[RMDB]
RNA sequence: GGGAACGACUCGAGUAGAGUCGAAAAGAUAUGGACGUAGUUCAAGCGAGAGCAUAGGUCGGAAACGACCUAAGCUCGAUGAGCUUGAGGUUCGAAGUCCUAAGUCAAAGUCGCCUUCGGGCGACAAGACGAAGUUAAUGUUCGCAUUAACUUCGUCAAAAGAAACAACAACAACAAC
Reactivity to 2A3 in 0.01 (KOAc 150mM, MgCl2 10mM, bicine 150mM(pH8.5), 24C), signal-to-noise 6, nucleotides 027 to 126: g010a010u020a010u060g000g010a010c040g050u170a060g200u140u020c000a010a010g010c010g030a110g000a000g050c010a010u010a000g000g000u000c000g000g000a010a020a010c010g000a000c000c010u000a010a010g000c000u000c010g000a080u030g000a010g000c000u010u000g020a010g030g150u260u300c150g090a160a020g010u000c000c000u000a020a000g000u010c030a100a050a070g000u000c000g000c010c000u050u110c300g090g000g000c020g000a000c000a000a020
Reactivity to DMS in 0.01 (KOAc 150mM, MgCl2 10mM, bicine 150mM(pH8.5), 24C), signal-to-noise 7, nucleotides 027 to 126: g000a010u000a080u010g000g010a010c000g010u020a140g010u010u000c000a010a010g010c010g000a070g000a000g030c000a120u000a010g010g020u000c000g010g010a030a030a060c000g010a010c000c000u000a000a020g020c000u000c000g000a070u010g000a250g000c010u000u000g010a020g010g010u010u020c220g010a130a220g000u000c000c000u000a010a110g000u000c010a100a110a130g000u000c000g010c000c010u000u010c190g030g000g020c000g000a000c010a010a050
The record gives the reactivity of an RNA of 177 nucleotides to 2A3 and DMS. The data come from the RNA Mapping Database (RMDB), library TTRDEL. Conditions: 150 mM KOAc, 10 mM MgCl2 and 150 mM bicine (pH 8.5), 24 C. For DMS the reverse transcriptase was MarathonRT.